[RMDB]
RNA sequence: GGGAACGACUCGAGUAGAGUCGAAAAGAUAUGGAUCCUGGAGGGAGCUGAGUAUCGGAAACGAUACCAGCUUUGAUCUCCUGGAUCCUAAGUCAAACAACAUCCAGUAGUUCGCUACUGGAUGUUGCAUCACACUUCGGUUCGCCGAAGUGUGAUGAAAAGAAACAACAACAACAAC
Reactivity to 2A3 in 0.01 (KOAc 150mM, MgCl2 10mM, bicine 150mM(pH8.5), 24C), signal-to-noise 2, nucleotides 027 to 126: g010a000u020a010u070g010g010a000u000c000c040u030g010g010a000g020g040g190a030g050c000u010g040a090g220u000a010u010c010g010g050a030a010a030c010g000a000u020a020c000c020a000g020c020u020u050u100g030a010u000c000u000c000c020u000g000g010a000u000c010c000u010a010a010g010u000c020a100a020a180c000a000a010c000a010u010c000c010a010g010u010a000g000u050u080c300g000c200u000a000c000u010g000g010a000u000g000u000u000g010
Reactivity to DMS in 0.01 (KOAc 150mM, MgCl2 10mM, bicine 150mM(pH8.5), 24C), signal-to-noise 3, nucleotides 027 to 126: g020a030u000a090u010g000g000a000u000c000c000u010g000g010a020g020g010g010a020g050c000u000g000a130g000u000a000u000c000g010g000a020a030a070c000g010a010u000a000c000c000a010g000c000u000u000u000g000a140u000c000u000c000c030u010g000g000a010u000c000c000u000a000a050g000u010c010a180a140a300c010a010a010c010a000u000c000c000a010g010u000a010g010u000u020c290g020c000u000a010c000u010g010g010a000u000g000u010u000g000

Conditions: 150 mM KOAc, 10 mM MgCl2 and 150 mM bicine (pH 8.5), 24 C. Structure probing data (2A3 and DMS) for a 177-nucleotide construct. Reactivities are given for positions 27 through 126.